[RMDB]
Background: Structure probing data (DMS and 2A3) for a 207-nucleotide construct.
RNA sequence: GGGAACGACUCGAGUAGAGUCGAAAAACGCGGAGUACGCUCCGCGACAACACUUCUUUCGACCCGCUAACCGAGACCUAUGGGUCGUUAAAUUACGUCUCUUUCUUACUCACAUAACAUCGCACAAAAAACGUGGUUCGGUUCGCCGAACCACGAAGUGUCUAUAAGUGUUCGCACUUAUAGACACAAAAGAAACAACAACAACAAC
Reactivity to DMS in 0.01 (KOAc 150mM, MgCl2 10mM, bicine 150mM(pH8.5), 24C), signal-to-noise 1, nucleotides 027 to 156: a100c090g020c010g020g010a050g030u000a090c280g030c010u020c000c010g030c000g030a050c030a100a130c070a060c010u000u020c000u000u010u020c010g040a020c010c000c000g030c100u000a090a130c050c080g000a070g050a050c020c040u000a140u000g020g000g040u010c010g000u000u010a040a100a080u000u010a050c050g020u010c010u000c050u020u000u020c030u000u000a060c020u010c000a060c050a080u000a050a170c040a070u010c070g000c040a080c080a030a030a210a070a080a080c010g110u010g030g000u010u000c000g050g000u010u010c300g010c020c000g020a030a000c010c000a000c020g000a000a010
Reactivity to 2A3 in 0.01 (KOAc 150mM, MgCl2 10mM, bicine 150mM(pH8.5), 24C), signal-to-noise 5, nucleotides 027 to 156: a000c020g010c000g000g010a000g010u030a010c170g050c060u000c000c000g030c010g010a000c020a060a040c020a020c060u130u100c040u100u270u140c000g000a010c040c010c020g030c210u220a040a010c040c040g010a010g010a020c000c010u030a110u230g010g000g000u010c000g000u020u010a000a030a020u160u070a020c010g010u000c010u000c000u020u120u050c040u030u150a110c020u060c120a080c030a170u210a190a060c030a110u190c140g060c160a030c130a060a060a050a030a040a030c050g000u010g000g000u000u010c000g000g050u020u070c130g020c070c000g000a010a000c010c000a000c000g000a010a000
The DMS profile rests on 2,343 reads.